[RMDB]
The record gives the reactivity of an RNA of 177 nucleotides to 2A3. 2A3 adducts were read by reverse transcription with SuperScript II with manganese. The RNA was probed in 150 mM KOAc, 10 mM MgCl2 and 150 mM bicine (pH 8.5) at 24 C.
RNA sequence: GGGAACGACUCGAGUAGAGUCGAAAAGAGUCAUUCAUGAAGUUCCAGGAGAGCUGCAUCAGCUUCUCGUGCUUCUCGUACUGAAGCACCUGCAGAUACAUCACGAUCAGCUUGUGCGGAUGCUUCAGGCUACGACGGACUUCGGUCCGUCGUAGCCAAAAGAAACAACAACAACAAC
Reactivity to 2A3 in 0.01 (KOAc 150mM, MgCl2 10mM, bicine 150mM(pH8.5), 24C), signal-to-noise 1, nucleotides 027 to 126: g150a000g150u160c090a050u140u040c020a090u120g050a110a020g000u020u030c070c000a050g070g040a150g120a020g000c000u000g010c010a000u000c000a070g030c000u080u000c000u000c000g000u000g040c050u180u040c030u000c140g210u210a070c080u020g000a040a000g000c000a000c010c000u000g000c000a000g000a080u050a210c120a070u180c150a030c150g050a030u030c000a000g090c060u040u000g020u280g120c090g000g000a010u060g050c000u000u000c000a010